RNA sequence: GGGAACGACUCGAGUAGAGUCGAAAACGACCUCCUGACGGGUCGGACAUAGCGUCAGGAUCAUCCGUGCCAGUCACCACGGUAAUCAUGUGGCUGAUGAUGGUUUUCCAUCUUAAUCUGACUGAGUCGUAGCAGUCUACAGUACUAUGACAUUAGAACGCGCAUUUAAUUUCGAUUAAAUGCGCGUAAAAGAAACAACAACAACAAC
Reactivity to 2A3 in 0.01 (KOAc 150mM, MgCl2 10mM, bicine 150mM(pH8.5), 24C), signal-to-noise 4, nucleotides 027 to 156: c020g000a000c010c000u050c000c000u030g000a000c000g030g030g000u030c040g010g070a050c070a080u140a020g080c000g000u000c000a000g020g010a010u120c070a030u020c010c000g010u000g030c040c000a010g000u000c000a000c000c000a000c000g040g070u090a020a030u120c050a020u040g000u020g010g000c050u000g010a020u070g000a000u000g000g210u120u260u240u090c000c010a010u020c000u000u110a110a060u140c200u140g010a000c000u010g010a000g010u000c010g020u000a000g000c000a000g010u000c140u130a070c080a100g030u010a060c010u030a020u020g000a000c000a030u040u080a090g040a060
Reactivity to DMS in 0.01 (KOAc 150mM, MgCl2 10mM, bicine 150mM(pH8.5), 24C), signal-to-noise 1, nucleotides 027 to 156: c070g000a300c030c000u000c010c040u020g020a050c020g020g010g000u010c020g020g010a070c060a180u000a100g020c010g010u030c000a050g000g000a100u020c080a130u000c000c030g020u000g000c020c020a190g010u010c010a050c120c000a010c080g020g010u000a050a080u000c120a060u000g010u000g000g000c020u000g000a050u000g000a090u000g000g020u010u000u010u010c000c010a030u000c040u000u020a110a140u060c060u000g000a140c040u000g000a110g040u010c000g030u000a050g010c000a090g020u000c080u000a100c180a100g020u000a030c010u000a020u000g010a040c030a190u020u000a080g020a130